Source: RMDB library RSTRND, as collected in RNAgym. Chemical mapping of a 207-nucleotide RNA with 2A3. The reactions ran in a buffer of 150 mM KOAc, 10 mM MgCl2 and 150 mM bicine (pH 8.5), at 24 C. As a SHAPE reagent, 2A3 marks flexible, mostly unpaired nucleotides at the ribose 2'-OH.

[RMDB]
RNA sequence: GGGAACGACUCGAGUAGAGUCGAAAAAGUCGCAAACGACGACAACUACGCUCAGGGCGCGCUGGCAGCGUAACAACUGCUAGCUUCUAGUCCGGCCCGGAGGUGAUGUGCCCAUUCAUCACCGAUGGGAUACGAGCUCAGACUGAUGGGAUCGCGGGUGUGUUGUCAGCUUCGGCUGACAACACACAAAAGAAACAACAACAACAAC
Reactivity to 2A3 in 0.01 (KOAc 150mM, MgCl2 10mM, bicine 150mM(pH8.5), 24C), signal-to-noise 1, nucleotides 027 to 156: a000g000u000c000g030c030a080a210a250c100g210a130c000g020a010c030a020a110c100u220a080c120g000c000u020c050a090g000g000g000c000g000c000g020c010u000g000g000c020a000g000c000g060u060a040a010c030a000a050c030u000g000c000u010a040g010c000u050u010c030u020a000g020u020c000c000g000g000c000c000c000g020g020a040g000g000u000g000a000u000g020u010g000c000c000c000a000u010u010c000a000u020c000a010c000c000g000a010u050g000g010g010a000u020a110c110g000a000g000c000u060c030a090g040a210c090u020g010a020u020g020g020g010a050u110c090g060c140g040g100
For 2A3, 848 sequencing reads were counted.